Description: Chemical mapping of a 177-nucleotide RNA with DMS and 2A3. 2A3 adducts were read by reverse transcription with SuperScript II with manganese. Conditions: 150 mM KOAc, 10 mM MgCl2 and 150 mM bicine (pH 8.5), 24 C.
RNA sequence: GGGAACGACUCGAGUAGAGUCGAAAACUCAAUGACUUCGGUCAUUGAGAAAGGACAAAAGUCCAACUGAGCAGCAAUGAGCUCAUACAUCGUCAUAGCAAAAAACACACACGUUCGCGUGUGUGAAGAUAGAGUAUACCUUCGGGUAUACUCUAUCAAAAGAAACAACAACAACAAC
Reactivity to DMS in 0.01 (KOAc 150mM, MgCl2 10mM, bicine 150mM(pH8.5), 24C), signal-to-noise 6, nucleotides 027 to 126: c000u000c000a000a000u000g010a020c000u000u010c200g030g000u000c000a000u000u000g000a000g000a030a070a110g010g020a020c010a060a080a110a130g010u000c000c010a100a170c230u000g000a020g000c010a170g000c030a110a030u000g000a030g010c000u010c020a060u010a080c140a050u000c150g010u000c010a030u010a040g010c040a000a050a070a060a070a130c020a010c000a000c000a010c010g010u000u010c210g010c010g030u000g020u000g000u000g010a020a030
Reactivity to 2A3 in 0.01 (KOAc 150mM, MgCl2 10mM, bicine 150mM(pH8.5), 24C), signal-to-noise 9, nucleotides 027 to 126: c000u000c000a000a000u000g000a000c010u020u050c220g100g000u010c010a000u000u000g000a000g000a060a050a000g020g000a020c040a050a300a080a050g000u000c000c010a020a030c060u040g000a000g010c010a000g000c010a020a060u030g000a010g010c000u010c020a060u160a080c090a080u130c150g070u010c010a020u020a020g000c000a020a020a030a050a120a020c010a000c000a000c000a000c010g020u040u050c270g020c000g080u000g000u000g000u000g000a010a010
It was measured as part of the RMDB library M2PK50.
Values cover nucleotides 27 to 126.